[RMDB]
RNA sequence: GGGAACGACUCGAGUAGAGUCGAAAAUGGGUAUGUGUGGCAUUUCUAAGGAAGAAGCAACAAGACGGUUAUUAAACAAUGGUGACAUUGUUAAACGAGCAAUCAGAGAUAGACAACCUUAGGAGGGCUCCACUCUGUUAUUCGUAACAGAGUGGAGAAAAGAAACAACAACAACAAC
Reactivity to 2A3 in 0.01 (KOAc 150mM, MgCl2 10mM, bicine 150mM(pH8.5), 24C), signal-to-noise 6, nucleotides 027 to 126: u100g050g000g020u130a100u100g060u040g050u060g050g020c110a110u000u040u030c020u050a030a030g060g000a070a110g040a070a050g050c020a000a090c010a050a030g080a040c060g000g060u090u060a080u060u180a120a060a020c000a000a000u000g010g030u090g040a020c000a000u000u000g000u000u040a040a030a010c090g030a040g100c020a040a030u090c050a060g040a020g040a140u050a060g070a040c040a030a070c010c000u010u040a010g020g030a020g000g020g010
Reactivity to DMS in 0.01 (KOAc 150mM, MgCl2 10mM, bicine 150mM(pH8.5), 24C), signal-to-noise 3, nucleotides 027 to 126: u020g020g000g010u000a050u000g010u020g030u020g000g010c070a070u010u000u010c000u000a000a030g000g010a040a050g000a060a070g000c050a050a060c070a060a120g000a050c300g010g000u000u010a050u050u000a050a060a020c010a010a000u000g000g000u080g000a170c020a010u000u010g000u000u000a030a040a130c170g010a040g020c090a050a080u000c060a110g020a130g000a050u030a040g010a120c090a120a070c020c010u010u010a030g000g020a030g000g020g000